[RMDB]
RNA sequence: GGGAACGACUCGAGUAGAGUCGAAAAAAUCGCCGUUGCUGUUCGAUUCUGGCGUAUGCGCGAAGCAGAGAAGAGGAAGCGAUGGUCUCAGGCUCUGUCCACCCACUCCAACCUUGAAUGGGAGAAAGGUAGGGACGAUCUUCGGAUCGUCCCUACCAAAAGAAACAACAACAACAAC
Reactivity to 2A3 in 0.01 (KOAc 150mM, MgCl2 10mM, bicine 150mM(pH8.5), 24C), signal-to-noise 1, nucleotides 027 to 126: a000a000u140c000g000c000c000g060u030u000g060c000u030g030u120u040c030g170a110u010u000c000u060g020g000c000g000u040a090u200g090c070g000c050g000a040a000g060c000a000g000a000g000a080a060g000a000g010g090a010a020g030c060g000a020u060g050g050u050c080u080c030a020g000g080c000u000c000u000g040u000c010c010a040c000c050c000a090c030u000c000c060a000a020c000c000u100u040g030a200a010u090g140g020g000a070g000a040a030a060
This 177-nucleotide RNA was probed chemically with 2A3. Conditions: 150 mM KOAc, 10 mM MgCl2 and 150 mM bicine (pH 8.5), 24 C. Values cover nucleotides 27 to 126. 2A3 adducts were read by reverse transcription with SuperScript II with manganese.